[RMDB]
RNA sequence: GGGAACGACUCGAGUAGAGUCGAAAAGAUGCGUCGCGGCAGUCCCGUGACGCAACAUCCACGGUCAGCGGUAGUACCUCGGUCGGCGGGGAGUUGCGUCGGGAGACUCGGCGGGCUUUGCCGUGGGCCCCGUAGCAACGUUCGCGUUGUUACGGGGAAAAGAAACAACAACAACAAC
Reactivity to 2A3 in 0.01 (KOAc 150mM, MgCl2 10mM, bicine 150mM(pH8.5), 24C), signal-to-noise 9, nucleotides 027 to 126: g070a020u060g020c020g030u040c010g010c000g010g010c050a020g100u130c000c000c000g010u020g010a000c000g000c000a000a000c000a020u000c000c000a020c010g010g020u060c040a040g020c030g060g000u060a050g050u100a130c010c000u030c020g050g050u060c030g030g080c070g020g010g010g010a120g020u030u040g060c000g000u000c000g010g050g010a170g020a030c040u020c040g030g000c010g010g000g000c000u070u060u070g000c000c000g000u020g000g020g000
Reactivity to DMS in 0.01 (KOAc 150mM, MgCl2 10mM, bicine 150mM(pH8.5), 24C), signal-to-noise 9, nucleotides 027 to 126: g010a080u010g010c020g010u000c000g000c030g000g010c180a200g000u030c090c000c000g020u000g010a010c000g010c010a010a010c040a110u020c010c010a050c020g010g010u010c230a080g030c120g000g000u020a080g010u030a300c010c010u000c030g010g010u010c050g010g010c050g000g000g000g000a070g000u010u000g000c020g010u000c010g000g000g000a150g000a100c030u010c010g010g000c000g000g000g000c030u010u020u010g020c000c000g010u000g010g010g000